[RMDB]
RNA sequence: GGGAACGACUCGAGUAGAGUCGAAAAAAAGUUGGGCCCCUGUUGGUGCGGGAGCGUCGGUAAAAAAGUGUCCCCAUUUCAGACAUCAACUGUUUUAUCCCGACACUUUUUUUACCCGACGCUCCCGACCCUCAGAGUAAUUCGUUACUCUGAGGGUAAAAGAAACAACAACAACAAC
Reactivity to DMS in 0.01 (KOAc 150mM, MgCl2 10mM, bicine 150mM(pH8.5), 24C), signal-to-noise 4, nucleotides 027 to 126: a080a060a060g000u000u000g010g010g000c000c010c020c060u020g000u010u010g000g030u000g010c010g030g000g010a010g000c000g020u010c010g010g000u010a000a010a010a010a000a010g000u000g010u000c000c030c040c040a100u010u010u000c100a070g000a090c090a090u030c210a090a110c100u000g010u000u000u020u010a140u010c030c030c050g010a050c000a000c000u000u000u000u000u010u010u010a050c150c020c020g030a020c000g000c020u000c000c000c000g000
This 177-nucleotide RNA was probed chemically with DMS. DMS adducts were read by reverse transcription with MarathonRT. The reactions ran in a buffer of 150 mM KOAc, 10 mM MgCl2 and 150 mM bicine (pH 8.5), at 24 C. Reactivities are rounded to 0.1 and cut off at 0 and 3.